This 177-nucleotide RNA was probed chemically with 2A3 and DMS. For DMS the reverse transcriptase was MarathonRT. Source: RMDB library OK2TST, as collected in RNAgym. For 2A3, 8,645 sequencing reads were counted. The reactions ran in a buffer of 150 mM KOAc, 10 mM MgCl2 and 150 mM bicine (pH 8.5), at 24 C. 2A3 adducts were read by reverse transcription with SuperScript II with manganese.
RNA sequence: GGGAACGACUCGAGUAGAGUCGAAAAUUAGUUGAUGAACAAGUGCUAUUCGAUUUUUAUGAUCAACGUAUCGGCACCGAUGUGGUCUCCACUAAACAUUUCGACAGUUGGUGGAAAGUGGCAAGUACGUAUACGAUAGAUUCGUCUAUCGUAUACGAAAAGAAACAACAACAACAAC
Reactivity to 2A3 in 0.01 (KOAc 150mM, MgCl2 10mM, bicine 150mM(pH8.5), 24C), signal-to-noise 6, nucleotides 027 to 126: u060u030a020g060u020u090g050a100u090g030a080a020c030a110a050g030u020g070c030u060a070u100u120c060g070a100u000u040u020u050u180a200u270g100a060u070c030a030a060c050g040u070a040u110c050g020g000c030a010c030c040g030a050u080g030u060g100g060u000c020u000c010c000a000c000u040a110a050a010c030a070u090u140u130c050g050a020c030a080g020u020u020g040g010u020g010g000a060a050a030g060u080g030g020c040a050a020g070u050a050
Reactivity to DMS in 0.01 (KOAc 150mM, MgCl2 10mM, bicine 150mM(pH8.5), 24C), signal-to-noise 9, nucleotides 027 to 126: u010u000a080g010u010u000g000a050u000g010a080a070c080a090a100g010u000g010c020u000a110u000u010c100g010a060u000u010u010u010u010a090u040g010a060u010c060a080a090c160g010u000a040u010c110g010g000c050a040c030c050g010a090u000g020u000g010g010u000c050u000c010c020a020c030u000a030a030a060c080a120u000u000u000c120g010a070c130a080g010u000u000g000g000u000g000g000a030a060a080g010u000g010g010c060a040a070g010u000a090